[RMDB]
RNA sequence: GGGAACGACUCGAGUAGAGUCGAAAACGAUCUGUUUUCAGAUCGAGCUACGUUUUCGUAGCGAUGGGUAGCGCUCCUCCCAGCUACCCUAUAUUUGAUAUAAAUGGACAUCCGCCGGUACCAGGGUGUCCGGGAGGAGGUAUAAUAGGUGCCGGGAGAUAUAAAUUACGUUCGCGUAAUUUAUAUCAAAAGAAACAACAACAACAAC
Reactivity to 2A3 in 0.01 (KOAc 150mM, MgCl2 10mM, bicine 150mM(pH8.5), 24C), signal-to-noise 3, nucleotides 027 to 156: c020g000a000u000c010u030g060u130u150u300u300c000a000g000a000u010c000g010a010g010c000u000a010c010g080u100u180u100u300c030g000u010a010g000c010g010a040u030g000g000g000u010a000g000c000g000c020u040c020c000u020c020c000c000a010g000c010u010a000c010c000c000u000a020u010a010u060u100u130g040a020u010a010u030a190a150a130u250g000g000a000c000a000u000c010c010g020c050c040g040g010u010a000c000c000a030g010g010g000u000g000u000c000c000g000g000g000a000g030g010a010g020g020u110a070u040a180a190u080a060g000g000u010g000c010c010g020g070g000a110

About this RNA
This 207-nucleotide RNA was probed chemically with 2A3. For 2A3 the reverse transcriptase was SuperScript II with manganese. Conditions: 150 mM KOAc, 10 mM MgCl2 and 150 mM bicine (pH 8.5), 24 C.